Record summary
Chemical mapping of a 207-nucleotide RNA with 2A3.

[RMDB]
RNA sequence: GGGAACGACUCGAGUAGAGUCGAAAAACAGUCAGUACGCUGACUGAGGGAAACGGGAGCCGGGCUUGGGACAAGAGCCAUCCCAAGUCCAAGGCUAAGUAGGCUCUAGUGAUGGUACGCCAUCACAAAAACUGGUCUACCUUCGGGUAGACCAGAACUCCAUUAGCCUGUUCGCAGGCUAAUGGAGAAAAGAAACAACAACAACAAC
Reactivity to 2A3 in 0.01 (KOAc 150mM, MgCl2 10mM, bicine 150mM(pH8.5), 24C), signal-to-noise 2, nucleotides 027 to 156: a000c000a000g000u000c000a000g010u070a050c240g020c100u010g000a010c000u010g020a100g000g060g000a020a270a120c100g040g040g060a030g030c040c030g000g020g000c000u000u000g010g000g000a010c010a040a080g000a000g020c000c000a000u000c010c000c000a000a010g000u000c000c000a060a030g000g000c000u060a070a030g040u100a060g020g000c000u000c010u030a000g000u000g020a010u010g000g050u050a040c290g000c040c000a000u000c000a010c020a000a000a030a000a040c000u000g000g010u020c000u000a000c000c000u020u050c160g080g000g000u010a000g000a000c000c000a000g000a000a000